[RMDB]
RNA sequence: GGGAACGACUCGAGUAGAGUCGAAAAGUGAAGGCUUCGGCCUUCACAAAAACCACCGCAAGGGAGGGGAUUCCCCUCGGGUGUGGACGACACCCCGGCCCCAAAAAGAAAGCUGUUCGCAGCUUUCCCGAAAUGAUAACUUCGGUUAUCAUUUCGGAAAAGAAACAACAACAACAAC
Reactivity to 2A3 in 0.01 (KOAc 150mM, MgCl2 10mM, bicine 150mM(pH8.5), 24C), signal-to-noise 1, nucleotides 027 to 126: g000u010g010a000a000g000g000c010u040u090c270g080g000c030c000u000u000c000a010c010a010a010a010a000a000c010c000a010c010c010g070c080a060a050g100g010g050a070g060g000g010g090a120u090u140c010c000c000c020u010c010g000g010g000u150g010u020g010g170a130c090g040a010c020a000c010c000c010c000g020g000c000c000c000c020a040a140a040a010a020g000a000a000a010g000c000u000g010u080u120c290g000c070a000g030c000u020u000u010c000
Reactivity to DMS in 0.01 (KOAc 150mM, MgCl2 10mM, bicine 150mM(pH8.5), 24C), signal-to-noise 2, nucleotides 027 to 126: g010u000g000a020a010g010g030c020u000u020c210g010g020c000c000u000u010c000a000c000a010a020a050a130a120c020c030a080c010c010g020c240a140a200g020g000g010a080g030g000g000g000a260u000u000c010c010c000c250u000c040g000g020g000u020g070u000g000g030a100c170g020a200c020a030c010c000c000c020g010g020c010c000c000c000a000a090a080a060a100g000a010a040a010g020c000u000g020u010u010c210g010c020a000g010c000u000u000u000c000